[RMDB]
RNA sequence: GGGAACGACUCGAGUAGAGUCGAAAAUAUCUUUGUAAUAGGAGGGAGUCAGCUUCAGUGACACUAAAGAAAUAUCCUUCAACAUUACUACUCUUUGACCAAGUAUCUAAAUAAAACAUUACCAAGGCCAGGGAAUGUUUUUCGAAACAUUCCCUGGAAAAGAAACAACAACAACAAC
Reactivity to DMS in 0.01 (KOAc 150mM, MgCl2 10mM, bicine 150mM(pH8.5), 24C), signal-to-noise 1, nucleotides 027 to 126: u000a060u020c090u000u000u030g000u000a200a000u020a080g000g000a000g000g010g000a000g000u000c220a170g000c200u050u060c030a090g010u000g140a200c130a300c200u050a080a000a000g000a200a050a050u000a050u000c060c030u000u000c010a100a050c100a000u000u000a000c140u000a010c000u030c090u000u000u000g000a120c090c000a000a060g000u000a010u000c100u000a000a080a130u090a010a000a070a050c020a050u000u000a000c140c020a080a120g000g000
Reactivity to 2A3 in 0.01 (KOAc 150mM, MgCl2 10mM, bicine 150mM(pH8.5), 24C), signal-to-noise 3, nucleotides 027 to 126: u120a020u010c050u030u060u080g020u080a010a020u030a090g050g000a010g060g020g010a050g020u020c020a010g040c050u120u050c050a160g030u030g070a030c020a020c150u120a000a130a060g140a020a090a010u140a040u010c000c000u000u050c010a070a040c030a090u130u070a000c020u020a000c020u020c030u080u040u100g030a050c000c040a060a000g020u020a050u080c050u140a130a060a120u180a040a060a090a010c070a040u050u120a040c060c020a030a010g050g020

Description:
Conditions: 150 mM KOAc, 10 mM MgCl2 and 150 mM bicine (pH 8.5), 24 C. Structure probing data (DMS and 2A3) for a 177-nucleotide construct. It was measured as part of the RMDB library OK1LIB. The 2A3 profile rests on 2,125 reads. DMS adducts were read by reverse transcription with MarathonRT.